RNA sequence: GGGAACGACUCGAGUAGAGUCGAAAAUUCUGGGCUGGGGCAGGACAAGGCCACUCAUGCCCCACUUGCCCUUCUGAGGUUCAGCCAAAUGAGGCUCCCACCCCCAUGACUCACAAGGCAGCUGGGAGCUCCGGCACUACCCGUGGGGAUGGUCAGAGGGUAGUAAUUUAUUCGUAAAUUACUACCCAAAAGAAACAACAACAACAAC
Reactivity to 2A3 in 0.01 (KOAc 150mM, MgCl2 10mM, bicine 150mM(pH8.5), 24C), signal-to-noise 1, nucleotides 027 to 156: u060u020c030u070g010g010g030c030u020g010g000g000g000c000a000g020g000a040c020a120a060g050g000c030c010a030c020u020c010a030u030g000c000c010c030c010a030c020u090u140g020c000c000c000u060u040c050u020g050a040g050g000u080u100c040a010g000c000c030a050a080a130u200g000a100g050g000c000u000c000c000c000a010c000c000c000c010c020a060u040g010a070c040u030c100a050c020a110a080g050g010c030a060g020c100u020g020g000g000a050g020c020u020c030c030g020g000c010a020c070u070a050c000c000c000g000u060g000g000g000g000a030u030g020g020u020c040a040g150a080
Reactivity to DMS in 0.01 (KOAc 150mM, MgCl2 10mM, bicine 150mM(pH8.5), 24C), signal-to-noise 1, nucleotides 027 to 156: u010u020c070u000g020g050g050c030u010g020g020g040g060c070a030g000g040a080c010a080a110g020g000c070c040a110c100u000c060a120u000g000c000c000c000c010a060c080u010u010g000c030c010c010u000u010c080u000g020a130g010g000u000u000c060a110g000c060c010a000a100a070u000g030a080g010g000c000u000c040c000c050a170c030c000c000c010c010a190u000g000a080c050u000c050a150c020a140a070g010g040c050a050g030c000u000g000g020g020a070g020c030u010c030c020g030g030c050a130c020u000a050c000c030c030g020u000g000g000g060g010a060u000g000g000u000c050a120g000a300